[RMDB]
The data come from the RNA Mapping Database (RMDB), library OK3TST. An RNA of 207 nucleotides, treated with 2A3 and DMS and read out base by base. As a SHAPE reagent, 2A3 marks flexible, mostly unpaired nucleotides at the ribose 2'-OH. The reactions ran in a buffer of 150 mM KOAc, 10 mM MgCl2 and 150 mM bicine (pH 8.5), at 24 C. Values cover nucleotides 27 to 156.
RNA sequence: GGGAACGACUCGAGUAGAGUCGAAAAUGUUAGCUAAGUUUCGAGUUGCCCGUCUCUAUGGCAAAAUCAUUACUGCAGAUCCCAAGAAAGAGCUGGAAAAUUUGGCAACAUCAUUGGAACAUUACAAAUUUAUUGUUGAUUACUGUGAAAAGCAUCCGAUCAUAUUAGGUUUCGACCUAAUAUGAUCAAAAGAAACAACAACAACAAC
Reactivity to 2A3 in 0.01 (KOAc 150mM, MgCl2 10mM, bicine 150mM(pH8.5), 24C), signal-to-noise 3, nucleotides 027 to 156: u050g030u020u110a060g000c010u040a100a050g000u010u040u030c060g010a030g020u010u010g020c000c010c010g060u030c000u000c000u040a260u110g040g000c010a030a030a030a110u130c060a040u000u140a090c050u080g000c000a040g030a130u020c010c000c010a020a010g020a010a050a000g060a010g000c070u090g000g080a010a100a100a120u060u140u160g000g010c000a030a010c010a060u090c030a050u010u140g080g020a040a020c010a070u030u210a100c090a080a120a030u170u200u100a120u090u120g040u000u010g030a070u000u150a110c050u070g030u050g120a030a090a010a030g030c000a020u000c080c060
Reactivity to DMS in 0.01 (KOAc 150mM, MgCl2 10mM, bicine 150mM(pH8.5), 24C), signal-to-noise 2, nucleotides 027 to 156: u020g010u000u020a230g000c000u020a120a140g020u000u010u010c030g020a190g030u000u000g000c050c000c050g050u010c050u010c000u010a130u000g030g010c050a070a040a080a090u000c070a060u010u010a060c030u000g030c050a090g000a160u000c030c010c000a060a120g000a100a120a110g000a070g000c060u010g040g010a060a020a030a150u000u000u000g000g020c000a060a060c040a050u020c070a180u010u020g020g010a050a090c080a120u000u000a160c050a050a050a130u020u000u000a060u030u000g040u000u000g000a130u000u000a080c020u000g000u010g010a090a110a070a110g030c040a100u010c120c100